[RMDB]
RNA sequence: GGGAACGACUCGAGUAGAGUCGAAAACUUCCAGCGUUCGCGCUGGAAGAAAGGCCGAGUAGUGUUGCGUCGCGAAAGGCCAUAAAUCAACAAUCACUCAGAAAAUCGGUAUCUUCGGAUACCGAAAUCAUCAACCAUACUUCGGUAUGGUUGAUGAAAAAGAAACAACAACAACAAC
Reactivity to DMS in 0.01 (KOAc 150mM, MgCl2 10mM, bicine 150mM(pH8.5), 24C), signal-to-noise 1, nucleotides 027 to 126: c010u000u000c000c000a000g000c000g020u000u010c160g030c010g050c000u000g000g030a020a000g000a010a040a060g000g010c010c010g000a030g020u000a090g070u000g020u000u020g010c240g000u000c000g020c020g010a130a070a250g000g000c000c000a010u000a020a030a120u000c180a050a040c220a100a090u000c100a050c040u000c080a250g010a080a040a150a090u000c000g010g010u050a000u000c000u000u030c230g000g020a020u000a010c000c010g000a000a040a060
Reactivity to 2A3 in 0.01 (KOAc 150mM, MgCl2 10mM, bicine 150mM(pH8.5), 24C), signal-to-noise 1, nucleotides 027 to 126: c000u000u000c010c000a010g000c010g060u090u090c110g000c000g000c130u040g000g010a020a000g000a030a010a000g000g020c010c040g000a000g000u020a010g000u000g080u150u190g240c140g130u180c020g050c010g000a000a000a000g000g000c000c000a000u010a010a000a000u060c060a000a070c020a010a130u250c140a060c160u090c000a070g110a120a150a010a130u050c000g000g000u000a000u000c010u020u100c240g110g020a000u020a010c020c010g010a000a020a000